Background:
The record gives the reactivity of an RNA of 177 nucleotides to 2A3 and DMS.
RNA sequence: GGGAACGACUCGAGUAGAGUCGAAAAGAUAUGGACGACUUGGAGAAGUGGUACUCCCCACCUCGGAAACGAGAGGUACCCUUCUGCGAAGAGUCGUCCUAAGUCAAAAGACUACUUCGGUAGUCAACACUUGGUUAAGGUUCGCCUUAACCAAGUGAAAAGAAACAACAACAACAAC
Reactivity to 2A3 in 0.01 (KOAc 150mM, MgCl2 10mM, bicine 150mM(pH8.5), 24C), signal-to-noise 2, nucleotides 027 to 126: g000a020u090a060u130g000g010a010c010g000a000c000u000u020g050g060a010g000a020a020g070u240g230g000u010a000c020u140c030c050c020c080a220c050c020u000c010g020g020a020a030a020c020g010a010g000a060g000g000u000a000c020c000c000u000u020c010u150g190c000g000a020a010g000a000g010u000c000g010u000c000c000u000a000a000g010u000c020a030a020a060a150g010a000c000u000a000c000u030u090c270g100g000u000a010g000u020c010a010a010
Reactivity to DMS in 0.01 (KOAc 150mM, MgCl2 10mM, bicine 150mM(pH8.5), 24C), signal-to-noise 4, nucleotides 027 to 126: g000a030u000a110u000g000g000a020c010g010a020c000u000u010g000g000a020g010a030a000g020u010g030g010u000a000c000u000c080c060c030c060a300c160c020u000c000g020g000a060a020a100c000g010a010g010a300g010g000u000a010c010c000c010u000u000c000u000g000c180g020a160a150g010a000g000u010c000g000u000c000c000u000a000a060g010u000c040a060a110a090a140g000a010c000u000a000c000u010u000c200g010g010u010a010g010u000c000a110a150
Description: The data come from the RNA Mapping Database (RMDB), library TTRDEL. The DMS profile rests on 3,400 reads.